[RMDB]
RNA sequence: GGGAACGACUCGAGUAGAGUCGAAAAGAUAUGGACGCCUCAGCGAGCGUGUGUCGGAAACGACACUACGCGAUGAGCUGAUGCGUCCUAAGUCAAAACCUACUCCGUGGUUCGCCACGGAGUAGGACUGUUACUUGCAGUUCGCUGCAAGUAACAGAAAAGAAACAACAACAACAAC
Reactivity to DMS in 0.01 (KOAc 150mM, MgCl2 10mM, bicine 150mM(pH8.5), 24C), signal-to-noise 3, nucleotides 027 to 126: g000a020u000a010u000g000g010a020c010g010c000c110u010c000a020g020c000g000a190g030c000g020u000g020u000g000u000c000g020g000a010a010a030c010g010a020c000a000c000u000a010c000g030c000g020a100u010g030a270g010c000u000g010a010u000g000c000g000u000c000c000u000a000a030g000u010c000a140a080a140a190c010c010u000a010c000u010c010c010g040u000g000g000u010u020c290g010c000c000a010c000g010g000a000g010u000a000g000g020a020
Reactivity to 2A3 in 0.01 (KOAc 150mM, MgCl2 10mM, bicine 150mM(pH8.5), 24C), signal-to-noise 3, nucleotides 027 to 126: g010a010u010a000u050g010g000a000c000g010c010c020u020c020a010g050c140g300a070g030c000g000u000g000u010g020u020c000g010g000a030a020a000c000g000a000c020a010c030u090a010c010g040c020g000a160u250g140a040g000c010u020g000a010u010g000c010g010u000c000c000u010a000a000g000u000c000a010a020a040a130c000c000u010a010c010u000c000c010g000u010g000g120u110u110c300g080c100c000a000c000g010g000a000g000u000a000g000g000a000
Chemical mapping of a 177-nucleotide RNA with DMS and 2A3. DMS adducts were read by reverse transcription with MarathonRT. The RNA was probed in 150 mM KOAc, 10 mM MgCl2 and 150 mM bicine (pH 8.5) at 24 C. 2A3 adducts were read by reverse transcription with SuperScript II with manganese. Values cover nucleotides 27 to 126. In probing experiments dimethyl sulfate is read out at A N1 and C N3, which are open when not base-paired.